[RMDB]
RNA sequence: GGGAACGACUCGAGUAGAGUCGAAAACACACACCUACUCUAGGAAGCAUAAUGACCUAGGGUUCCUGGUGCAGUUUGAAAUCCAUUGCUGUGCUUAUAAUGAAGGUCGUGCUUCCACACAUGGCUUCUCAUCCAUGACUGAGUGUGGGGGGGAUAAUGAGUCAGGAUAGUUCGCUAUCCUGACUCAAAAAGAAACAACAACAACAAC
Reactivity to DMS in 0.01 (KOAc 150mM, MgCl2 10mM, bicine 150mM(pH8.5), 24C), signal-to-noise 1, nucleotides 027 to 156: c050a040c050a110c030a050c000c020u000a040c030u000c080u000a150g030g030a110a180g030c020a090u000a100a120u030g000a110c020c000u000a080g010g060g000u000u010c050c030u010g050g080u000g050c000a000g020u000u040u000g030a080a170a220u000c160c060a200u000u010g030c000u000g000u000g010c000u000u000a080u000a190a120u000g000a250a020g000g020u000c050g010u020g020c020u000u010c100c060a070c050a130c010a000u000g000g010c020u000u000c040u010c110a160u010c050c010a010u020g000a250c060u000g000a020g080u000g000u000g050g120g000g050g030g000g000a060u000a050a250
Reactivity to 2A3 in 0.01 (KOAc 150mM, MgCl2 10mM, bicine 150mM(pH8.5), 24C), signal-to-noise 1, nucleotides 027 to 156: c110a000c000a000c040a030c010c050u100a080c020u020c080u240a050g000g000a020a000g000c000a030u050a100a270u300g040a000c030c010u080a040g110g040g020u050u040c040c040u010g010g010u000g000c020a020g000u000u070u160g090a130a100a080u020c110c070a080u110u090g000c000u010g010u010g010c020u150u070a050u130a280a170u280g090a180a000g000g000u000c000g000u010g000c030u000u010c000c000a010c000a000c000a020u000g010g010c030u230u080c030u040c050a150u050c010c010a060u020g020a170c080u080g020a030g010u040g030u130g000g000g020g000g010g000g080a020u140a100a080
The record gives the reactivity of an RNA of 207 nucleotides to DMS and 2A3.
For 2A3 the reverse transcriptase was SuperScript II with manganese.
It was measured as part of the RMDB library OK3TST.